[RMDB]
RNA sequence: GGGAACGACUCGAGUAGAGUCGAAAAUUAGAGAAUUUGAUGGUUGGUGGUUUGUUAAUCAUCAUUGGACUCAUCACACUUAGGAUUCGAUAUUCAUUUAAAAAAAGAGGAUAGAAAAAGCACUGCAGCUCUAUUAUUUAUUCGUAAAUAAUAGAGCAAAAGAAACAACAACAACAAC
Reactivity to DMS in 0.01 (KOAc 150mM, MgCl2 10mM, bicine 150mM(pH8.5), 24C), signal-to-noise 3, nucleotides 027 to 126: u020u030a070g000a130g010a080a080u010u010u000g000a050u010g000g020u010u000g020g010u000g010g020u010u000u020g020u000u010a030a040u000c030a030u010c050a040u010u010g000g020a160c040u000c010a080u030c020a060c140a090c120u010u000a120g000g000a090u000u000c030g010a100u020a030u010u020c040a090u000u000u010a000a000a060a030a050a050a100g010a070g000g000a060u000a060g000a060a050a060a130a120g000c080a020c070u000g010c160a170
Reactivity to 2A3 in 0.01 (KOAc 150mM, MgCl2 10mM, bicine 150mM(pH8.5), 24C), signal-to-noise 5, nucleotides 027 to 126: u140u120a020g010a000g020a060a070u040u030u080g030a040u070g030g030u020u020g010g070u030g010g140u100u070u150g100u040u180a040a020u060c030a000u010c010a010u030u100g050g040a010c010u020c090a030u050c000a030c000a010c090u040u080a040g080g030a040u050u070c040g050a030u070a050u090u040c030a030u030u170u300a090a170a010a010a010a020a010g090a040g030g010a020u050a080g100a050a100a020a010a000g040c010a040c060u030g020c030a010